Chemical mapping of a 207-nucleotide RNA with 2A3.
Reactivities are given for positions 27 through 156.
Source: RMDB library OK3TST, as collected in RNAgym.
[RMDB]
RNA sequence: GGGAACGACUCGAGUAGAGUCGAAAACUAGGAUUCACACCGAGAGUGAGGGAUGGUGGAACCUGGCUCACUCCCAGCCUAGAGUGAGGGAUGGCAUCUAGACGUAUUGCCAUCCUAGGUUGAGUGAGGGAUGGCUCAAUACUCACUCGGCUAUUACCCCAAAUGAGGUGUUCGCACCUCAUUUGGGAAAAGAAACAACAACAACAAC
Reactivity to 2A3 in 0.01 (KOAc 150mM, MgCl2 10mM, bicine 150mM(pH8.5), 24C), signal-to-noise 4, nucleotides 027 to 156: c010u010a000g050g040a250u030u050c050a040c020a030c280c050g060a090g040a040g170u260g130a200g040g090g070a090u200g060g010u010g010g020a010a010c010c000u010g020g000c030u060c050a070c010u000c000c020c000a000g010c000c000u070a080g000a010g030u020g010a020g030g000g010a000u010g000g000c030a030u000c080u110a120g100a270c080g130u210a100u060u110g010c000c000a010u020c000c000u010a020g010g010u000u020g000a000g020u040g030a140g010g090g060a080u070g070g000c000u010c030a010a010u050a080c010u010c010a000c000u000c000g000g000c020u090a140u120u190a150c000